[RMDB]
RNA sequence: GGGAACGACUCGAGUAGAGUCGAAAAGUGCAGCCAGGCCGCGGCGCCGGUGCCGGCAACCACUGGCGCGAUCGCGUUCGGCAGCGUUCGGGGCCGCGCGCCGGAGACCCACUGUGCGAAACUGGCCCGCUAGAUGGACGUUCGCGUCCAUCUAGCGAAAAGAAACAACAACAACAAC
Reactivity to DMS in 0.01 (KOAc 150mM, MgCl2 10mM, bicine 150mM(pH8.5), 24C), signal-to-noise 1, nucleotides 027 to 126: g010u000g000c150a230g130c000c060a060g020g000c150c060g020c060g030g020c010g030c010c000g020g020u000g020c020c020g050g010c100a010a090c210c120a090c080u000g000g020c000g010c020g010a040u010c230g010c080g010u000u010c000g000g000c050a080g040c030g030u000u040c150g000g000g000g000c020c030g020c130g060c030g030c000c000g010g030a120g000a140c010c070c120a090c140u030g050u000g000c020g000a060a150a090c100u000g000g040c010c080
The record gives the reactivity of an RNA of 177 nucleotides to DMS.
Reactivities are rounded to 0.1 and cut off at 0 and 3.
The RNA was probed in 150 mM KOAc, 10 mM MgCl2 and 150 mM bicine (pH 8.5) at 24 C.
For DMS the reverse transcriptase was MarathonRT.
DMS (dimethyl sulfate) methylates the pairing face of unpaired adenines and cytosines.